[RMDB]
RNA sequence: GGGAACGACUCGAGUAGAGUCGAAAAGCCUAUUUCGAUAGGCGCACCACCUUUGUGUCUGGACCUGAUGUGCCAGUCAAUAGAUCCCAUUGGGAUUAAUUGACGGUAAUACAUCAGGAGAACCAGACACUCUGGUCACAAACUCGUUCGCGAGUAACAUUGGCAACAUGUUCGCAUGUUGCCAAUGAAAAGAAACAACAACAACAAC
Reactivity to 2A3 in 0.01 (KOAc 150mM, MgCl2 10mM, bicine 150mM(pH8.5), 24C), signal-to-noise 5, nucleotides 027 to 156: g010c000c000u010a020u000u130u070c150g200a040u000a000g000g000c010g010c050a060c030c000a010c000c010u020u010u010g010u000g000u000c000u010g090g110a300c000c010u000g000a000u000g000u020g020c040c110a150g030u000c000a010a010u040a100g060a020u000c000c040c110a270u190u300g020g000g000a000u000u040a090a060u000u060g010a000c000g020g000u060a170a080u100a150c000a000u000c000a000g000g010a010g010a010a010c000c000a000g010a000c010a000c000u000c000u000g000g000u050c050a070c060a180a220a030c020u010c010g050u100u040c260g010c010g140a000g010u050a030a020
Reactivity to DMS in 0.01 (KOAc 150mM, MgCl2 10mM, bicine 150mM(pH8.5), 24C), signal-to-noise 1, nucleotides 027 to 156: g020c000c000u000a000u000u000u000c230g020a090u010a000g000g030c010g000c070a060c010c010a130c020c000u040u000u000g020u000g000u020c020u010g020g020a230c000c000u020g020a030u020g030u000g020c090c040a300g040u000c000a020a010u010a300g020a000u000c020c000c000a300u020u000g020g000g000a020u000u000a100a020u000u010g010a020c020g020g000u010a020a070u020a140c000a020u000c000a030g000g000a010g000a050a230c010c000a020g020a040c000a000c000u000c010u010g000g000u000c030a050c070a100a070a120c010u010c030g000u000u020c140g000c050g010a050g020u000a130a110